[RMDB]
RNA sequence: GGGAACGACUCGAGUAGAGUCGAAAACAUAUCAAUUAGCCCUUCUAAUGGUAAUACCACUUUACCUGCAAUUACAACUGAUGUCAUUGCUUUCUCAGGAAUUUCCACGUCAGUGCUAAUAUUUAAGUGAGUGAAGGAGAUUCGUCUCCUUCACUCAAAAAGAAACAACAACAACAAC
Reactivity to DMS in 0.01 (KOAc 150mM, MgCl2 10mM, bicine 150mM(pH8.5), 24C), signal-to-noise 2, nucleotides 027 to 126: c100a070u030a070u030c160a070a080u000u000a060g000c020c110c030u000u020c120u000a110a080u010g020g030u000a050a030u000a080c100c080a120c180u010u000u000a040c040c030u010g010c040a060a030u000u000a010c090a080a180c080u020g020a080u000g010u000c070a080u000u000g000c040u000u000u000c090u000c120a100g000g000a040a060u000u000u000c040c030a030c060g010u000c130a050g020u000g000c080u000a030a070u000a040u000u000u000a100a100g010
Reactivity to 2A3 in 0.01 (KOAc 150mM, MgCl2 10mM, bicine 150mM(pH8.5), 24C), signal-to-noise 2, nucleotides 027 to 126: c050a050u220a020u180c100a070a140u100u040a080g010c020c000c000u030u050c080u080a070a050u090g000g080u060a030a000u080a110c040c040a080c100u050u050u140a090c030c030u000g000c020a020a030u030u040a050c040a140a020c180u260g070a180u100g080u000c040a010u010u020g010c000u000u110u050c080u030c050a020g030g000a080a090u000u000u040c000c000a020c010g040u000c010a030g000u000g000c010u040a090a160u150a190u120u240u210a100a020g110

The data come from the RNA Mapping Database (RMDB), library OK2TST. Structure probing data (DMS and 2A3) for a 177-nucleotide construct. For 2A3 the reverse transcriptase was SuperScript II with manganese. The 2A3 profile rests on 974 reads.